[RMDB]
Chemical mapping of a 177-nucleotide RNA with DMS. The DMS profile rests on 684 reads. DMS adducts were read by reverse transcription with MarathonRT. The reactions ran in a buffer of 150 mM KOAc, 10 mM MgCl2 and 150 mM bicine (pH 8.5), at 24 C.
RNA sequence: GGGAACGACUCGAGUAGAGUCGAAAAUUGAAAGACUUACCCAUUUUGGUUUUAGAAAAUGCAAAGUUGAGUUAAAACCAAUCGUACAUUCCAGAAAAGUUCUCUCAGUAGACUUUGCUUGCAAAGACACUGGCUGAUGAUUCGUCAUCAGCCAGUGAAAAGAAACAACAACAACAAC
Reactivity to DMS in 0.01 (KOAc 150mM, MgCl2 10mM, bicine 150mM(pH8.5), 24C), signal-to-noise 1, nucleotides 027 to 126: u000u000g000a110a110a100g010a060c090u010u020a190c040c040c070a160u020u000u000u000g000g010u000u000u000u000a060g010a110a060a060a090u010g000c040a030a060a080g020u010u010g000a110g050u010u020a030a020a000a010c000c010a000a050u010c190g000u000a090c110a150u020u000c090c100a110g000a060a050a060a030g020u000u000c000u000c020u000c090a050g020u020a170g000a010c020u000u000u000g010c010u000u010g000c110a040a080a130g010a240